[RMDB]
RNA sequence: GGGAACGACUCGAGUAGAGUCGAAAACAGCUACGUUUCGACGUAGCUGAAAAUAAAACAGGCAAGUACCAGCCUCAAAAAGGUACAAAGAUCGAAAGAUCAAAACGGUUCGAUUCGUCGAACCGAAGGAUAUGAGAUAGUUCGCUAUCUCAUAUCCAAAAGAAACAACAACAACAAC
Reactivity to DMS in 0.01 (KOAc 150mM, MgCl2 10mM, bicine 150mM(pH8.5), 24C), signal-to-noise 5, nucleotides 027 to 126: c010a010g010c000u010a000c000g010u000u000u010c170g030a020c000g010u000a000g000c000u010g000a010a030a030a070u010a120a040a110a130c250a000g010g000c010a020a190g020u010a010c000c000a060g000c000c000u010c210a000a020a000a070a050g030g040u010a010c000a120a080a090g010a010u000c000g010a110a090a120g000a020u000c010a070a070a080a160c010g000g010u000u000c000g000a010u000u010c190g010u000c000g000a000a000c000c000g010a020a020
Reactivity to 2A3 in 0.01 (KOAc 150mM, MgCl2 10mM, bicine 150mM(pH8.5), 24C), signal-to-noise 8, nucleotides 027 to 126: c010a000g000c000u010a000c000g020u010u040u160c190g080a020c000g000u010a000g000c000u000g000a000a000a000a010u120a000a060a010a030c120a010g010g010c010a080a120g000u000a000c000c000a010g010c000c000u070c020a070a090a010a010a020g000g000u000a000c010a010a100a000g010a000u010c010g020a070a030a020g000a000u000c010a020a030a000a040c010g000g010u000u000c000g000a010u030u050c180g040u000c000g090a000a000c000c000g000a030a020

Record summary:
Source: RMDB library M2PK50, as collected in RNAgym. Chemical mapping of a 177-nucleotide RNA with DMS and 2A3. For DMS, 5,778 sequencing reads were counted. High 2A3 reactivity points to a flexible backbone, as in loops and unpaired stretches. The RNA was probed in 150 mM KOAc, 10 mM MgCl2 and 150 mM bicine (pH 8.5) at 24 C. The 2A3 profile rests on 35,719 reads.